[RMDB]
This 177-nucleotide RNA was probed chemically with 2A3 and DMS. Source: RMDB library RFMREP, as collected in RNAgym. The 2A3 profile rests on 3,076 reads. The reactions ran in a buffer of 150 mM KOAc, 10 mM MgCl2 and 150 mM bicine (pH 8.5), at 24 C.
RNA sequence: GGGAACGACUCGAGUAGAGUCGAAAACCCAACCUUCGGGUUGGGAAAAUAGUCCAAAAGGUCUUUCCUGUUUGCUAUGGCCUUGAGGAAUGUGGCCCUAGAUCCAAAAGGCGGAGUUCGCUCCGCCCUGCAAAGAAAAGUUCGCUUUUCUUUGCAGAAAAGAAACAACAACAACAAC
Reactivity to 2A3 in 0.01 (KOAc 150mM, MgCl2 10mM, bicine 150mM(pH8.5), 24C), signal-to-noise 3, nucleotides 027 to 126: c010c000c000a010a010c010c000u050u070c290g090g020g000u000u020g010g000g020a050a050a010a060u060a010g020u000c010c000a000a080a000a030g020g010u000c020u020u080u110c060c040u130g100u220u300u150g050c050u080a090u190g000g000c010c000u040u050g000a040g030g060a020a060u140g020u040g080g010c000c000c010u030a080g010a090u090c070c050a080a080a030a070g000g000c010g000g010a010g010u070u150c120g030c050u000c000c000g000c000c010
Reactivity to DMS in 0.01 (KOAc 150mM, MgCl2 10mM, bicine 150mM(pH8.5), 24C), signal-to-noise 3, nucleotides 027 to 126: c010c000c000a010a010c000c010u010u010c160g020g010g030u000u010g000g020g000a000a020a060a060u000a110g010u000c000c000a040a170a060a040g000g000u000c000u000u000u000c040c040u020g010u000u010u010g030c030u000a040u000g020g010c000c010u000u000g000a300g000g000a050a060u000g010u000g010g000c050c010c010u010a080g000a070u010c090c170a070a050a100a090g010g010c000g010g000a020g020u000u010c240g000c000u000c000c000g000c000c000